[RMDB]
RNA sequence: GGGAACGACUCGAGUAGAGUCGAAAAGAUAAUGUCUUCGGACAUUAUCCACGCCUAAAGGCUUUAAUUAAUUAGCUAAGCCUGCUAAUUAUAAUGGCAUUAACAACUGUCCAUUCGUGGACAGUAAAAUCGCUUUUCAUUUCGAUGAAAAGCGAUUAAAAGAAACAACAACAACAAC
Reactivity to DMS in 0.01 (KOAc 150mM, MgCl2 10mM, bicine 150mM(pH8.5), 24C), signal-to-noise 1, nucleotides 027 to 126: g000a010u030a000a000u000g010u000c010u010u020c240g020g000a030c000a020u000u000a000u000c010c050a060c300g000c010c000u000a070a060a110g020g010c010u000u000u000a040a100u010u000a000a010u020u000a010g000c000u010a100a170g000c230c230u000g000c010u000a000a020u000u000a010u010a050a110u020g000g020c010a160u020u000a080a070c190a070a040c000u010g000u000c000c000a000u000u020c220g010u000g000g010a000c000a010g020u000a000a080
Conditions: 150 mM KOAc, 10 mM MgCl2 and 150 mM bicine (pH 8.5), 24 C. Structure probing data (DMS) for a 177-nucleotide construct. The data come from the RNA Mapping Database (RMDB), library M2PK50.